[RMDB]
RNA sequence: GGGAACGACUCGAGUAGAGUCGAAAAUCACGGUUCGCCGUGAAAAGGGCCGUAGGCGAGAAGAGAGCGACGAUCUAUACUAGUAGCUGUUCGAAAGAGCCGAAAGUAUAGGGAGCUCUCGGAUCGCCUAAACGGGAUUUUGCAAUUUCGAUUGCAAUACGUGAAUUGUUUUCGAACAAUUCACGUAAAAAGAAACAACAACAACAAC
Reactivity to 2A3 in 0.01 (KOAc 150mM, MgCl2 10mM, bicine 150mM(pH8.5), 24C), signal-to-noise 3, nucleotides 027 to 156: u020c000a000c000g000g050u080u050c240g050c030c020g030u010g000a020a020a000a020g040g030g010c010c000g010u000a010g000g000c030g010a030g000a030a030g000a000g000a000g000c000g260a300c020g000a010u010c000u000a000u000a010c010u000a010g070u020a010g000c170u090g110u080u060c040g070a140a080a090g070a020g040c040c000g000a040a020a000g000u000a000u000a000g010g000g000a010g000c000u010c000u000c020g000g000a000u000c000g000c000c000u000a010a010a000c000g000g030g000a020u120u120u060u060g000c000a010a020u040u160u180c230g140a040u030u010g010c000a000a030
Reactivity to DMS in 0.01 (KOAc 150mM, MgCl2 10mM, bicine 150mM(pH8.5), 24C), signal-to-noise 2, nucleotides 027 to 156: u000c020a010c020g010g020u000u000c210g050c010c000g000u000g000a010a010a080a070g020g030g020c000c020g050u000a050g030g030c000g010a030g000a300a300g000a040g020a070g010c000g010a060c130g000a060u020c000u010a050u000a000c000u000a180g000u000a040g020c020u010g010u010u010c040g010a160a090a300g000a020g030c000c010g010a170a110a090g000u000a010u000a040g000g000g010a090g000c000u000c000u000c000g000g000a300u000c020g010c020c030u000a000a000a040c030g000g000g010a090u010u000u010u020g000c020a050a120u000u000u020c220g030a170u000u000g000c010a030a160
An RNA of 207 nucleotides, treated with 2A3 and DMS and read out base by base. The DMS profile rests on 3,466 reads. The reactions ran in a buffer of 150 mM KOAc, 10 mM MgCl2 and 150 mM bicine (pH 8.5), at 24 C. For 2A3 the reverse transcriptase was SuperScript II with manganese. The 2A3 profile rests on 2,724 reads.